Notes: The record gives the reactivity of an RNA of 177 nucleotides to 2A3 and DMS. The RNA was probed in 150 mM KOAc, 10 mM MgCl2 and 150 mM bicine (pH 8.5) at 24 C. It was measured as part of the RMDB libraries RFM100 and RFMREP.

[RMDB]
RNA sequence: GGGAACGACUCGAGUAGAGUCGAAAACUGUCGACAGGACAGCAAAGUCCUUCACACCCAGGUCCACCCCGACCGCGCUGCCGGUCUCGGGCUGCGGUUCGGGGUCGUCGGUGUCCACGGCCAAGGUUUACUUCCCUAGAUUCGUCUAGGGAAGUAAAAAAGAAACAACAACAACAAC
Reactivity to 2A3 in 0.01 (KOAc 150mM, MgCl2 10mM, bicine 150mM(pH8.5), 24C), signal-to-noise 7, nucleotides 027 to 126: c010u030g010u030c010g030a110c070a140g090g000a000c000a010g060c050a140a100a030g020u030c000c010u030u060c030a050c000a010c020c010c010a020g010g100u000c020c010a020c010c000c000c000g000a010c000c000g000c010g170c300u110g010c010c010g080g080u110c090u100c130g060g010g000c010u030g010c010g000g030u100u140c020g010g000g000g000u000c000g010u000c000g020g020u030g030u010c040c030a060c040g030g000c020c040a070a030g050g000u000
Reactivity to DMS in 0.01 (KOAc 150mM, MgCl2 10mM, bicine 150mM(pH8.5), 24C), signal-to-noise 5, nucleotides 027 to 126: c130u000g010u010c060g010a090c190a050g000g000a020c050a080g010c180a080a080a110g000u000c010c000u000u020c050a070c080a090c020c010c050a070g020g000u010c050c130a100c020c000c000c000g020a010c010c000g010c010g010c150u020g010c040c010g010g010u020c090u030c040g010g020g020c020u030g020c010g000g010u020u020c020g020g000g000g000u000c060g010u020c040g010g010u000g000u000c020c040a060c080g020g000c040c090a090a070g000g010u020
DMS adducts were read by reverse transcription with MarathonRT.